Source information
Chemical mapping of a 177-nucleotide RNA with DMS and 2A3. The data come from the RNA Mapping Database (RMDB), library OK2TRN. The DMS profile rests on 43,696 reads. 2A3 adducts were read by reverse transcription with SuperScript II with manganese. For 2A3, 36,695 sequencing reads were counted. Values cover nucleotides 27 to 126.
RNA sequence: GGGAACGACUCGAGUAGAGUCGAAAAGGCCGACGCGCCCGACGUCGCAGGCGAGGCGAGCCGGCUGCCAGUGGAGUGGGUGCGACUGGACCCGCACGGCGAGUCACUAGCCGCCGUGCGCCUGGCGCGCGUUAGAUAAAUUCGUUUAUCUAACGCGAAAAGAAACAACAACAACAAC
Reactivity to DMS in 0.01 (KOAc 150mM, MgCl2 10mM, bicine 150mM(pH8.5), 24C), signal-to-noise 9, nucleotides 027 to 126: g010g010c010c010g010a050c010g010c010g010c010c010c020g000a080c040g010u000c110g010c140a100g010g020c010g010a150g010g000c010g000a080g020c050c030g010g000c010u000g000c020c010a050g020u000g010g010a130g010u010g000g010g010u000g000c020g010a100c060u000g000g010a190c050c070c020g000c000a010c010g010g000c000g000a100g010u010c080a110c290u020a140g010c030c010g010c000c000g010u000g010c010g010c040c030u000g000g020c120g010
Reactivity to 2A3 in 0.01 (KOAc 150mM, MgCl2 10mM, bicine 150mM(pH8.5), 24C), signal-to-noise 9, nucleotides 027 to 126: g010g000c010c010g010a020c010g010c010g000c010c020c000g100a050c010g040u090c050g010c200a050g020g030c060g150a080g010g010c020g000a040g060c040c020g030g010c020u050g020c000c010a050g030u100g070g070a150g050u160g020g050g020u070g040c030g050a080c080u080g020g030a080c000c010c000g000c000a000c000g000g000c010g010a110g070u120c060a050c300u130a050g020c000c000g000c000c000g000u010g000c000g000c000c010u050g030g010c070g000
Conditions: 150 mM KOAc, 10 mM MgCl2 and 150 mM bicine (pH 8.5), 24 C.